[RMDB]
This 207-nucleotide RNA was probed chemically with 2A3 and DMS. DMS adducts were read by reverse transcription with MarathonRT. Source: RMDB library VIROID, as collected in RNAgym. Conditions: 150 mM KOAc, 10 mM MgCl2 and 150 mM bicine (pH 8.5), 24 C.
RNA sequence: GGGAACGACUCGAGUAGAGUCGAAAACGCACCAGUUCCGCUGUGGGUUCGCCUACAAGAACGUACGGUGUUGAGGCCCUGUCCGCCGCUGCGCUGCCACCUACUCUCGCCGCGCUAGUCGAGCGGACUCCGGGUGGAGCCCCCUGUUCUCUCACGCCUUAUCAGUAUUGUUCGCAAUACUGAUAAGAAAAGAAACAACAACAACAAC
Reactivity to 2A3 in 0.01 (KOAc 150mM, MgCl2 10mM, bicine 150mM(pH8.5), 24C), signal-to-noise 3, nucleotides 027 to 156: c040g010c000a010c000c000a020g000u010u000c020c000g040c020u000g000u020g000g000g050u020u070c250g100c070c000u010a000c010a030a130g000a020a000c010g030u110a060c110g000g000u020g030u040u160g050a060g000g100c000c000c000u020g000u000c000c000g000c010c000g000c000u000g000c000g010c000u010g040c020c040a120c060c050u240a240c060u150c040u070c140g000c010c010g030c010g020c160u160a010g040u270c070g030a060g000c000g000g000a000c000u000c040c030g000g000g010u050g050g110a080g010c010c000c000c000c010u000g020u030u040c100u000c000u020c040a070c110g090c010
Reactivity to DMS in 0.01 (KOAc 150mM, MgCl2 10mM, bicine 150mM(pH8.5), 24C), signal-to-noise 2, nucleotides 027 to 156: c080g040c040a030c000c020a300g000u000u000c040c010g040c140u000g020u000g000g010g010u010u010c300g000c040c000u000a100c030a160a110g010a060a040c030g040u000a090c080g000g020u000g040u000u010g010a150g040g000c030c010c050u020g000u000c010c090g000c000c010g010c030u000g020c010g030c010u000g010c020c060a080c070c030u020a190c130u010c080u000c110g000c010c000g010c030g030c030u000a060g030u000c070g030a140g020c030g000g000a010c020u000c020c110g050g070g060u000g040g000a130g020c020c010c040c050c110u010g010u000u000c140u030c020u000c040a090c140g000c160